[RMDB]
RNA sequence: GGGAACGACUCGAGUAGAGUCGAAAAAAGAUAUGGAUGUUGGAACUACAACCUCUAAUGCUUUGAUCGCUUAUCGGAAACGAUAAGCGGGAGCAUUAUCGUGAGGUUGCCAACAUCCUAAGUCAAACCUUCAUAUCAAGUUCGCUUGAUAUGAAGGAAAAGAAACAACAACAACAAC
Reactivity to DMS in 0.01 (KOAc 150mM, MgCl2 10mM, bicine 150mM(pH8.5), 24C), signal-to-noise 3, nucleotides 027 to 126: a100a100g000a030u000a300u000g000g000a010u000g010u000u000g000g010a100a030c110u010a300c010a010a000c000c000u000c000u000a020a000u000g000c010u000u000u000g010a080u010c010g020c000u000u000a000u000c000g000g000a090a070a140c000g000a010u000a000a000g010c000g010g000g000a000g010c000a010u000u000a030u000c300g010u010g000a010g020g020u000u000g000c000c000a000a010c000a000u000c000c000u000a010a070g000u000c020a070a110a170
Reactivity to 2A3 in 0.01 (KOAc 150mM, MgCl2 10mM, bicine 150mM(pH8.5), 24C), signal-to-noise 8, nucleotides 027 to 126: a000a010g060a030u070a030u100g000g000a000u000g000u010u020g020g020a080a050c090u220a070c300a010a000c000c000u000c020u030a010a000u000g000c020u280u280u100g110a150u230c010g000c010u010u000a000u010c000g010g040a100a040a050c010g000a010u000a020a000g000c000g000g000g000a010g000c000a000u030u030a090u170c280g090u120g030a010g000g010u000u010g000c000c000a000a000c000a000u000c000c000u000a030a010g030u000c020a040a040a130